The record gives the reactivity of an RNA of 177 nucleotides to DMS and 2A3. The reactions ran in a buffer of 150 mM KOAc, 10 mM MgCl2 and 150 mM bicine (pH 8.5), at 24 C. Values cover nucleotides 27 to 126. For DMS the reverse transcriptase was MarathonRT.
RNA sequence: GGGAACGACUCGAGUAGAGUCGAAAACAUGUACCCUUCGGGGUACAUGAACAUAACGCGGGCGUGGGAGACCGCCGGAGCUAGCCUCAGAUAGUCCCAGUAUUAGGUGCGCCUUCGGGCGCACCAACAUUAGUGGGUAGUUCGCUACCCACUAAUGAAAAGAAACAACAACAACAAC
Reactivity to DMS in 0.01 (KOAc 150mM, MgCl2 10mM, bicine 150mM(pH8.5), 24C), signal-to-noise 4, nucleotides 027 to 126: c010a010u000g000u000a010c000c000c000u000u020c180g030g020g000g010u000a000c000a000u000g000a110a080c130a110u000a090a130c140g010c040g010g010g000c030g030u010g000g000g000a120g000a080c050c010g000c010c050g010g010a060g020c030u010a060g020c080c010u000c040a080g000a130u000a100g000u010c010c000c010a190g020u010a080u010u010a090g020g030u000g000c000g000c000c010u000u010c180g030g010g030c000g000c000a000c000c000a010a040
Reactivity to 2A3 in 0.01 (KOAc 150mM, MgCl2 10mM, bicine 150mM(pH8.5), 24C), signal-to-noise 3, nucleotides 027 to 126: c000a000u000g000u000a010c010c020c000u010u050c250g030g000g000g010u000a000c000a010u000g000a020a000c030a080u220a110a040c070g010c050g110g010g010c060g070u120g030g070g010a110g020a050c010c000g010c010c020g040g000a020g010c040u090a040g030c010c010u050c020a030g030a190u110a050g070u020c000c010c000a010g080u070a170u170u210a050g020g000u010g000c010g040c000c010u020u080c290g060g030g000c000g010c010a000c000c000a000a000
The DMS profile rests on 4,910 reads.